Chemical mapping of a 177-nucleotide RNA with 2A3 and DMS.
RNA sequence: GGGAACGACUCGAGUAGAGUCGAAAAUUGAUCUGGGUGGCGGUGUCUUUCGGCUUUUUCGGCGUCAUCGACAAUGCGGCAAAGUUCGCGCAGUGAUGUGUCGGGAUCGUCGAUAGCGACGACGACACCUAAUAUGAUCGUUCGCGAUCAUAUUAGGAAAAGAAACAACAACAACAAC
Reactivity to 2A3 in 0.01 (KOAc 150mM, MgCl2 10mM, bicine 150mM(pH8.5), 24C), signal-to-noise 9, nucleotides 027 to 126: u070u090g040a020u030c050u090g050g010g010u030g030g010c020g010g010u020g010u020c000u010u050u030c010g020g010c000u010u050u010u020u040c010g010g000c010g060u120c030a030u010c000g030a030c040a040a090u120g000c010g020g000c070a300a230a120g060u160u050c020g000c000g000c050a030g020u030g080a060u050g020u010g010u020c000g000g010g030a040u020c010g000u000c010g010a010u040a030g080c050g020a020c010g010a010c010g000a000c010a020
Reactivity to DMS in 0.01 (KOAc 150mM, MgCl2 10mM, bicine 150mM(pH8.5), 24C), signal-to-noise 9, nucleotides 027 to 126: u010u010g010a090u000c080u000g010g010g030u000g010g010c030g010g010u000g000u000c020u010u000u000c020g010g000c020u000u000u000u000u000c010g010g000c020g010u010c020a030u000c010g010a080c120a070a120u010g010c010g020g000c030a150a110a160g010u010u000c040g010c020g010c170a140g010u010g000a040u000g010u000g010u000c000g000g000g000a060u000c060g010u000c000g010a050u000a040g010c090g000a050c020g010a070c100g000a040c060a070

Source: RMDB library OK2TST, as collected in RNAgym. The RNA was probed in 150 mM KOAc, 10 mM MgCl2 and 150 mM bicine (pH 8.5) at 24 C.